[RMDB]
RNA sequence: GGGAACGACUCGAGUAGAGUCGAAAAGCGACUACCUUCGGGUAGUCGCAAAUAAAUUCAGCGGUAAUUCGAGCCGAAAUAUUACCGCUGAUCGCCUCGAAAAAAGCCUAGACUUCGGUCUAGGCAACACCAUACGAGAGUUCGCUCUCGUAUGGUGAAAAGAAACAACAACAACAAC
Reactivity to 2A3 in 0.01 (KOAc 150mM, MgCl2 10mM, bicine 150mM(pH8.5), 24C), signal-to-noise 1, nucleotides 027 to 126: g000c010g000a000c010u020a000c000c000u030u070c240g050g000g000u000a000g000u010c000g030c000a020a000a000u010a000a000a010u070u010c000a000g010c000g010g020u000a010a030u080u090c130g060a100g170c110c030g080a060a100a000u210a010u000u000a000c000c000g000c000u000g010a000u010c000g030c010c000u090c020g030a090a040a000a050a100a000g000c000c000u000a000g020a000c000u030u070c300g000g000u000c000u000a000g000g000c000a000a000
Reactivity to DMS in 0.01 (KOAc 150mM, MgCl2 10mM, bicine 150mM(pH8.5), 24C), signal-to-noise 2, nucleotides 027 to 126: g000c000g020a000c000u000a010c020c000u000u020c150g020g030g010u000a000g010u000c000g010c000a000a020a030u000a050a040a110u010u000c000a020g000c020g020g000u000a010a020u010u000c150g000a140g020c210c180g000a070a100a080u000a140u010u010a010c000c000g000c000u000g000a010u000c170g010c010c000u000c170g020a010a050a130a110a130a140g010c000c000u000a000g000a020c000u000u010c190g010g010u000c000u000a000g010g000c000a010a020